[RMDB]
RNA sequence: GGGAACGACUCGAGUAGAGUCGAAAAACAUUUAACUUCUUGUUAGAUUUGGCAGGAUUGUUCAGAAUCUUUCUCCGCAAUGCCUAUGUGUACACUUCACAAGGGUUUGUGGUGGUCAAUGGCAAAGCAACUUGGGAGUUCGCUCCCAAGAAAAGAAACAACAACAACAAC
Reactivity to 2A3 in 0.01 (KOAc 150mM, MgCl2 10mM, bicine 150mM(pH8.5), 24C), signal-to-noise 9, nucleotides 027 to 129: a000c040a010u090u110u110a050a030c010u040u050c030u070u070g020u040u060a110g020a300u150u100u150g020g000c000a000g010g050a090u070u090g050u120u130c070a040g050a120a070u020c050u020u100u020c040u030c010c030g000c010a010a030u070g050c000c040u090a130u090g130u000g010u040a070c090a030c110u080u100c020a000c020a060a100g100g040g100u050u090u040g030u030g010g020u020g010g010u060c020a020a060u040g020g000c000a010a020a040g030c010a010a070
Reactivity to DMS in 0.01 (KOAc 150mM, MgCl2 10mM, bicine 150mM(pH8.5), 24C), signal-to-noise 6, nucleotides 027 to 129: a080c070a080u050u040u030a040a050c040u000u000c100u020u030g000u000u000a050g030a140u040u040u070g000g000c100a050g000g000a010u020u040g030u030u040c090a070g020a030a040u030c050u000u000u000c020u040c070c120g000c010a010a050u040g020c010c000u060a070u000g040u020g020u000a050c080a040c160u030u040c030a000c050a010a280g040g030g000u000u000u060g010u050g010g050u030g040g010u020c050a040a090u040g020g030c050a020a040a180g010c060a080a150